Structure probing data (2A3) for a 207-nucleotide construct. The RNA was probed in 150 mM KOAc, 10 mM MgCl2 and 150 mM bicine (pH 8.5) at 24 C. For 2A3, 490 sequencing reads were counted. As a SHAPE reagent, 2A3 marks flexible, mostly unpaired nucleotides at the ribose 2'-OH. Values are in units of 0.01, from 0 to 300, in steps of 10.
[RMDB]
RNA sequence: GGGAACGACUCGAGUAGAGUCGAAAAUCCCUCGAUCUGCCACGUCUGUUCGAAGAGUAGUCUUCGUGGCAACUGGCAGUUAAACCGUGUAGUACCGAUGGAGGUUGGAAACAAUGCACAUCACUACCGGGUCUUGGGCAGUGCGAUAGCGAUGGGACAGAGCAUACCUCUUCGGAGGUAUGCUCUGAAAAGAAACAACAACAACAAC
Reactivity to 2A3 in 0.01 (KOAc 150mM, MgCl2 10mM, bicine 150mM(pH8.5), 24C), signal-to-noise 1, nucleotides 027 to 156: u000c000c060c000u010c010g010a040u000c030u000g000c010c000a010c110g070u050c120u140g000u000u010c010g050a000a000g000a060g020u300a080g140u020c030u030u030c040g040u080g050g000c000a000a010c000u000g000g000c000a010g010u000u050a160a040a000c010c000g030u040g000u190a000g040u080a080c000c110g000a000u020g000g060a070g090g110u050u050g000g040a150a000a000c070a150a050u230g060c110a000c000a040u020c000a000c000u000a020c020c030g030g030g000u030c130u110u260g040g010g070c060a060g040u060g070c000g060a040u070a130g040c040g020a030u020g000g040g060a030